[RMDB]
RNA sequence: GGGAACGACUCGAGUAGAGUCGAAAACGGUGAUCGUGCAUGGAUGGGAAAGCAUGCGCGACGGUCGCUAUAUUCAGCAUGCGAAAGGAUGGCAUUGUAAGCAUGCGAAAGGAUGGUGAGCAGCAUGCGAAAGGAUGGAUAGUAUUCGCCCCAUCCGUAGAAUGUUCACUUUCGAGUGAACAUUCUAAAAAGAAACAACAACAACAAC
Reactivity to DMS in 0.01 (KOAc 150mM, MgCl2 10mM, bicine 150mM(pH8.5), 24C), signal-to-noise 3, nucleotides 027 to 156: c060g060g050u000g020a020u010c030g010u000g000c020a100u010g020g000a100u000g030g000g010a130a060a270g030c000a030u000g000c000g020c040g030a090c040g040g030u000c020g050c020u000a080u000a110u000u020c080a300g000c010a020u000g020c000g000a110a160a100g010g000a130u020g020g010c050a270u000u000g010u010a110a260g000c010a010u010g000c000g000a040a060a050g010g010a060u000g010g000u000g020a140g040c030a220g000c040a040u010g010c090g010a090a050a110g000g000a100u000g010g000a090u000a110g000u000a300u000u000c030g010c040c010c020c000a020u000c040c000g040
Reactivity to 2A3 in 0.01 (KOAc 150mM, MgCl2 10mM, bicine 150mM(pH8.5), 24C), signal-to-noise 9, nucleotides 027 to 156: c050g020g020u070g020a110u050c020g020u030g040c020a040u060g000g050a040u030g030g020g050a080a050a010g040c010a010u020g000c020g000c050g040a020c020g000g020u030c020g010c090u050a040u010a050u230u090c030a030g010c010a010u020g010c010g100a100a040a050g100g050a080u130g060g010c070a060u040u120g050u100a050a010g000c000a000u010g010c010g020a050a020a000g060g020a010u060g030g030u060g020a060g020c060a020g000c000a020u030g010c070g050a080a030a020g040g020a030u080g050g000a020u040a070g060u090a110u060u090c040g030c000c000c000c000a000u000c000c000g000